[RMDB]
RNA sequence: GGGAACGACUCGAGUAGAGUCGAAAACGGGGCAACUCUUCUCAGAAUCCAGCGAGAGGCGUGGAGAGAGGGCCGCGGUGCUCUGGAGUAGAGGCUCUGCCUUCGAAACACCAUCGAUCGUCCCUUCACUAGUAUGUAUCUUCGGAUACAUACUAGUAAAAGAAACAACAACAACAAC
Reactivity to DMS in 0.01 (KOAc 150mM, MgCl2 10mM, bicine 150mM(pH8.5), 24C), signal-to-noise 7, nucleotides 027 to 126: c090g010g010g010g020c080a090a070c030u000c010u010u000c020u000c040a130g000a170a130u010c050c050a090g000c120g000a100g000a070g020g010c110g030u000g000g010a070g010a140g010a030g010g010g020c080c020g010c040g010g020u000g000c010u000c010u000g010g010a070g010u000a040g000a030g000g010c000u010c200u010g000c020c010u000u000c010g000a150a110a110c010a010c160c010a030u000c000g000a150u010c030g000u000c000c000c000u000u000c120
Reactivity to 2A3 in 0.01 (KOAc 150mM, MgCl2 10mM, bicine 150mM(pH8.5), 24C), signal-to-noise 6, nucleotides 027 to 126: c030g030g000g030g000c020a040a070c040u010c000u090u030c020u010c010a030g210a070a070u060c030c020a050g070c090g100a210g010a050g210g070c070g070u070g050g020a050g000a010g020a020g040g020g000c010c000g010c020g010g000u020g000c000u000c000u010g010g000a000g000u020a000g000a010g000g010c020u050c140u300g040c020c000u140u130c010g010a020a010a010c010a030c090c010a010u000c010g030a170u050c000g010u000c000c000c000u080u090c020
Structure probing data (DMS and 2A3) for a 177-nucleotide construct. The RNA was probed in 150 mM KOAc, 10 mM MgCl2 and 150 mM bicine (pH 8.5) at 24 C. For DMS, 10,120 sequencing reads were counted.